[RMDB]
Chemical mapping of a 177-nucleotide RNA with 2A3 and DMS. High DMS reactivity at an A or C suggests that its Watson-Crick edge is free. For 2A3 the reverse transcriptase was SuperScript II with manganese. The RNA was probed in 150 mM KOAc, 10 mM MgCl2 and 150 mM bicine (pH 8.5) at 24 C. For DMS the reverse transcriptase was MarathonRT.
RNA sequence: GGGAACGACUCGAGUAGAGUCGAAAAUGAUUGCGGCCGAUUGCGAGGGCGGGAAUUCGGCCUUUCCCUCAAUAUUCAUCGCAUAGGGUUGCAGCGAAUUCUUGCGGCCUGUUUCGGUCAGGCCCAACCUACGUAGUCACUUCGGUGACUACGUAGGAAAAGAAACAACAACAACAAC
Reactivity to 2A3 in 0.01 (KOAc 150mM, MgCl2 10mM, bicine 150mM(pH8.5), 24C), signal-to-noise 1, nucleotides 027 to 126: u100g050a120u000u110g010c030g000g000c000c000g180a110u050u030g020c030g000a030g060g030g000c060g010g000g020a020a080u110u040c020g120g000c010c000u000u000u000c000c000c000u020c020a050a070u100a070u100u170c030a080u050c100g000c080a010u050a040g090g000g040u000u010g010c060a040g030c020g030a030a130u090u040c000u040u160g010c090g010g020c020c000u040g020u070u240u150c210g050g070u060c000a010g040g030c020c000c000a020a010
Reactivity to DMS in 0.01 (KOAc 150mM, MgCl2 10mM, bicine 150mM(pH8.5), 24C), signal-to-noise 3, nucleotides 027 to 126: u010g020a100u020u010g020c050g010g020c020c010g000a090u010u000g030c120g020a060g000g020g000c300g000g000g000a060a070u000u000c090g020g000c040c050u000u000u000c010c000c000u000c090a070a110u000a080u010u030c130a110u000c030g010c080a040u020a150g010g010g000u000u010g000c030a040g010c110g000a080a120u000u000c030u000u000g010c180g010g010c000c000u020g000u000u010u000c120g020g010u020c030a060g020g010c000c000c020a060a150

The 2A3 profile rests on 1,153 reads.